[RMDB]
RNA sequence: GGGAACGACUCGAGUAGAGUCGAAAAGAUAUGGACCCACUACCCACCCCACAGCUACCAGCACGAAGAACUAGCUCGGAAACGAGCUAGGGAGUGCGUGGUAGCUGUGGGAGGUGGGUCCUAAGUCGAUGUGAAGAUGGUUCGCCAUCUUCACAUCAAAAGAAACAACAACAACAAC
Reactivity to 2A3 in 0.01 (KOAc 150mM, MgCl2 10mM, bicine 150mM(pH8.5), 24C), signal-to-noise 1, nucleotides 027 to 126: g160a110u230a260u300g000g000a000c000c090c000a000c000u210a270c000c010c010a030c020c000c010c000a000c000a010g000c000u000a000c020c010a020g010c020a030c000g230a300a090g000a040a040c000u020a000g000c000u010c000g010g080a090a060a090c000g010a010g070c000u000a010g000g050g000a040g000u040g020c060g100u020g000g000u010a010g020c020u010g010u000g010g000g000a010g010g000u000g010g010g000u020c000c000u000a020a000g160u120c060
Reactivity to DMS in 0.01 (KOAc 150mM, MgCl2 10mM, bicine 150mM(pH8.5), 24C), signal-to-noise 1, nucleotides 027 to 126: g010a170u010a190u000g000g010a030c000c010c000a000c040u000a120c010c000c020a300c220c000c020c020a010c000a000g040c000u000a000c000c000a270g020c000a010c010g000a170a170g050a110a160c000u040a000g010c010u020c000g000g000a160a160a300c010g050a010g000c000u010a010g000g000g000a110g030u000g010c000g070u010g000g000u000a000g040c010u010g040u000g000g000g020a000g010g010u000g010g010g000u000c010c020u020a020a140g000u000c140
This 177-nucleotide RNA was probed chemically with 2A3 and DMS. As a SHAPE reagent, 2A3 marks flexible, mostly unpaired nucleotides at the ribose 2'-OH. The DMS profile rests on 849 reads. The reactions ran in a buffer of 150 mM KOAc, 10 mM MgCl2 and 150 mM bicine (pH 8.5), at 24 C.